[RMDB]
RNA sequence: GGGAACGACUCGAGUAGAGUCGAAAAACGUCCUGAAAACGAAACGAAACUGAUUCAUUGUAAAGAGAUUUCGAAUCGUUUAUCAGGAUGUUGAAAACUUACCAAGGUUCUUCGGAACCUUGGUAAGCUUAGGUGCACUGUUCGCAGUGCACCUAAGAAAAGAAACAACAACAACAAC
Reactivity to 2A3 in 0.01 (KOAc 150mM, MgCl2 10mM, bicine 150mM(pH8.5), 24C), signal-to-noise 1, nucleotides 027 to 126: a020c000g030u000c000c000u030g000a000a010a000a000c000g010a010a000a000c000g020a010a000a010c030u070g110a200u200u100c080a100u290u280g170u300a030a090a010g080a090g050a170u000u000u000c010g010a020a020u000c000g000u010u020u040a300u010c000a000g000g020a000u010g000u010u010g000a000a000a000a010c010u000u000a000c000c000a010a000g000g010u000u000c010u030u100c150g020g000a020a000c020c090u000u000g000g000u000a000a000g000
Reactivity to DMS in 0.01 (KOAc 150mM, MgCl2 10mM, bicine 150mM(pH8.5), 24C), signal-to-noise 1, nucleotides 027 to 126: a030c000g000u000c000c000u000g000a020a020a010a020c000g000a000a050a300c000g010a030a010a020c010u010g010a300u000u000c030a210u000u000g000u000a000a090a030g000a100g010a140u000u000u000c000g000a040a300u000c000g020u000u000u000a100u000c000a020g010g010a000u000g010u000u020g000a020a060a060a250c000u000u000a000c000c000a000a000g030g010u000u000c020u000u020c230g030g010a000a000c000c000u010u010g000g000u000a000a000g010

Structure probing data (2A3 and DMS) for a 177-nucleotide construct. For DMS the reverse transcriptase was MarathonRT. For 2A3 the reverse transcriptase was SuperScript II with manganese. For DMS, 1,009 sequencing reads were counted. The RNA was probed in 150 mM KOAc, 10 mM MgCl2 and 150 mM bicine (pH 8.5) at 24 C.